Chemical mapping of a 207-nucleotide RNA with 2A3 and DMS. For 2A3, 1,433 sequencing reads were counted. Reactivities are given for positions 27 through 156. The DMS profile rests on 2,155 reads.
[RMDB]
RNA sequence: GGGAACGACUCGAGUAGAGUCGAAAAGUUAGGUGAGGCUCCUAUGCAAACACAGGCCACUGCCCAAAAAUGUCCAAAGACGCCAAUGGGUAGAACAGGGCUUGUCGGAUUAAGGCUUUCCAUAAUGAAAACAAAGUAUGCUUCGGCAUACUUUGAACGUAUAUACGGGGUUCGCCCCGUAUAUACGAAAAGAAACAACAACAACAAC
Reactivity to 2A3 in 0.01 (KOAc 150mM, MgCl2 10mM, bicine 150mM(pH8.5), 24C), signal-to-noise 1, nucleotides 027 to 156: g050u060u060a030g040g010u050g040a040g060g020c020u100c060c030u120a080u150g030c040a050a060a000c030a000c010a060g020g000c010c020a020c030u010g000c000c000c010a000a010a010a000a010u010g000u000c010c020a160a040a130g020a010c010g010c030c010a020a030u000g000g000g020u020a020g010a020a030c070a080g000g000g200c000u000u010g000u020c070g060g000a030u100u140a080a030g030g000c000u050u000u030c030c010a060u080a200a120u180g080a040a050a030a070c000a010a000a010g000u000a000u000g000c020u020u140c220g050g000c000a010u000a000c000u000u000u000g000a020a000
Reactivity to DMS in 0.01 (KOAc 150mM, MgCl2 10mM, bicine 150mM(pH8.5), 24C), signal-to-noise 1, nucleotides 027 to 156: g010u000u000a040g000g010u010g010a090g050g020c040u010c000c060u010a030u000g040c000a100a120a080c070a040c000a050g000g010c000c030a300c060u010g000c000c000c000a020a010a100a100a100u000g030u010c020c030a170a130a170g020a100c040g050c070c030a030a220u000g010g020g000u010a000g010a020a180c060a120g010g000g020c000u010u000g010u000c010g000g000a160u010u000a030a060g010g010c030u000u000u000c020c010a080u020a060a070u030g010a130a060a100a100c000a060a020a010g020u000a000u000g000c000u000u000c300g020g000c000a010u010a000c010u010u000u010g000a040a100